RNA sequence: GGGAACGACUCGAGUAGAGUCGAAAAUUUAAAAUUUUAAAAUCGUUCCCAGCCGAUUUUAAAAUUUUAAAUUUUCGACGCAAAAGCUCAUCUAAUAAUAAUCGGCAAGCGAGAGAACUCUUCCUUCGGGAAGGGAAAAGAAACAACAACAACAAC
Reactivity to 2A3 in 0.01 (KOAc 150mM, MgCl2 10mM, bicine 150mM(pH8.5), 24C), signal-to-noise 1, nucleotides 027 to 135: u010u000u010a000a000a000a030u010u010u000u000a020a020a000a000u020c000g000u050u080c030c010c000a000g050c010c020g000a010u030u020u000u020a020a030a020a010u070u000u000u000a010a000a000u000u020u010u000c000g040a000c030g020c050a050a090a070a110g010c010u010c040a060u040c050u040a020a050u120a190a040u080a070a040u130c020g020g020c060a040a000g040c030g020a040g020a010g010a140a060c000u000c020u010u020c000c000u000u040c200g100g000g020a010a020g010g000g050a100

Structure probing data (2A3) for a 155-nucleotide construct. Reactivities are given for positions 27 through 135. Source: RMDB library P90LIB, as collected in RNAgym. As a SHAPE reagent, 2A3 marks flexible, mostly unpaired nucleotides at the ribose 2'-OH.